[RMDB]
RNA sequence: GGGAACGACUCGAGUAGAGUCGAAAACGCCCCGGUAGCCACCCGGAGCGAGCGGGUUGAAGUCGAUUUUGUCGAGCACGCCCUCGAACUCGGCGCCGCCGGGGAGCGAGAUGAAGUCGCCGCCGCGACAUACCAGAGUCUUCGGACUCUGGUAUGUAAAAGAAACAACAACAACAAC
Reactivity to 2A3 in 0.01 (KOAc 150mM, MgCl2 10mM, bicine 150mM(pH8.5), 24C), signal-to-noise 3, nucleotides 027 to 126: c000g060c000c000c000c010g010g040u000a030g040c030c030a070c040c050c020g110g020a020g030c020g010a010g020c080g000g090g000u020u110g120a080a060g300u020c010g020a020u030u110u300u300g080u030c020g010a040g040c050a020c050g020c000c000c000u010c010g020a030a020c000u000c000g000g000c040g040c000c020g000c000c000g020g000g000g000a020g040c040g030a090g010a140u260g110a100a040g100u020c000g020c030c000g020c030c020g040c050g040
Reactivity to DMS in 0.01 (KOAc 150mM, MgCl2 10mM, bicine 150mM(pH8.5), 24C), signal-to-noise 6, nucleotides 027 to 126: c080g010c010c000c010c010g020g010u000a070g000c020c080a160c300c020c030g010g010a040g020c000g000a290g020c100g010g000g010u000u000g010a050a300g020u000c010g010a020u010u010u010u020g010u000c000g000a070g020c040a200c230g000c020c000c000u000c000g000a070a070c010u000c020g000g020c190g010c040c050g000c000c000g000g010g010g000a040g000c020g010a140g000a110u020g010a090a110g000u000c020g000c020c040g000c080c070g010c070g010